[RMDB]
RNA sequence: GGGAACGACUCGAGUAGAGUCGAAAAAUAGAAGCAUUGAUGAUUGCUGAGAGGACUAAGAAGGAGCAUUUUGAUAGCCAAGUUGGGAACGUUUGUUCGAGCUCUAUGUUCUCACUAUCUUCAAUUAGGUAGCGAAAAAUUUCGAUUUUUCGCUACCAAAAGAAACAACAACAACAAC
Reactivity to 2A3 in 0.01 (KOAc 150mM, MgCl2 10mM, bicine 150mM(pH8.5), 24C), signal-to-noise 5, nucleotides 027 to 126: a000u250a020g120a070a000g070c080a040u000u060g000a010u000g000a000u060u070g010c100u040g040a040g010a020g060g030a050c040u090a050a120g040a100a050g180g020a020g000c030a010u100u130u040u300g210a160u170a070g020c020c000a120a060g120u230u150g090g030g040a030a010c030g020u110u120u190g060u050u050c030g000a030g040c010u000c000u020a080u160g020u000u020c000u000c000a000c000u030a040u050c000u000u000c000a000a000u030u010a030
Reactivity to DMS in 0.01 (KOAc 150mM, MgCl2 10mM, bicine 150mM(pH8.5), 24C), signal-to-noise 2, nucleotides 027 to 126: a100u030a070g000a100a120g040c080a020u010u000g000a050u000g000a070u010u000g020c120u030g000a100g000a040g000g020a020c120u010a060a060g020a050a080g000g000a060g010c020a120u030u020u030u020g030a170u080a090g010c080c050a040a080g040u000u000g020g000g000a070a060c080g020u050u000u030g000u010u000c020g000a090g010c020u000c020u000a080u020g000u000u000c010u000c000a170c090u040a070u000c010u000u000c000a010a050u000u010a080
The record gives the reactivity of an RNA of 177 nucleotides to 2A3 and DMS.
For 2A3, 3,011 sequencing reads were counted.
For DMS the reverse transcriptase was MarathonRT.
Source: RMDB library OK1LIB, as collected in RNAgym.
The reactions ran in a buffer of 150 mM KOAc, 10 mM MgCl2 and 150 mM bicine (pH 8.5), at 24 C.
Reactivities are given for positions 27 through 126.